[RMDB]
RNA sequence: GGGAACGACUCGAGUAGAGUCGAAAAGCAGCAAGGCUGCAGCACGCGAGCCGCAGCCCGAGGCCGAGGUAGGGCAGGGGCGCGAGCAGAUCAGGGCCAUGCUCGCUGCCAAGAGGGCGCAGCGUGGCAAUCUGAUUCGCUUCGGCGAAUCAGAUUGAAAAGAAACAACAACAACAAC
Reactivity to DMS in 0.01 (KOAc 150mM, MgCl2 10mM, bicine 150mM(pH8.5), 24C), signal-to-noise 3, nucleotides 027 to 126: g020c000a040g010c050a130a100g020g010c020u010g020c030a110g010c020a050c100g010c090g010a150g020c010c030g000c040a160g020c010c010c020g000a160g010g020c010c010g010a060g020g010u010a150g000g010g030c030a130g010g010g010g030c040g010c020g010a050g020c010a060g000a110u000c080a050g000g000g020c020c030a060u000g000c000u010c080g010c000u020g020c010c020a100a120g020a170g020g000g030c030g000c040a070g010c010g030u000g000g000
Reactivity to 2A3 in 0.01 (KOAc 150mM, MgCl2 10mM, bicine 150mM(pH8.5), 24C), signal-to-noise 2, nucleotides 027 to 126: g040c020a020g010c040a180a280g200g010c000u030g010c020a000g050c030a020c060g070c060g040a040g100c040c010g020c080a030g000c000c000c010g020a050g110g000c030c070g060a040g040g130u110a060g020g050g000c020a020g070g010g020g000c010g010c010g010a020g000c050a020g000a060u100c010a030g000g020g070c000c010a010u010g000c010u010c010g040c060u170g010c020c010a090a030g150a110g080g080g040c040g000c020a000g020c010g020u000g010g040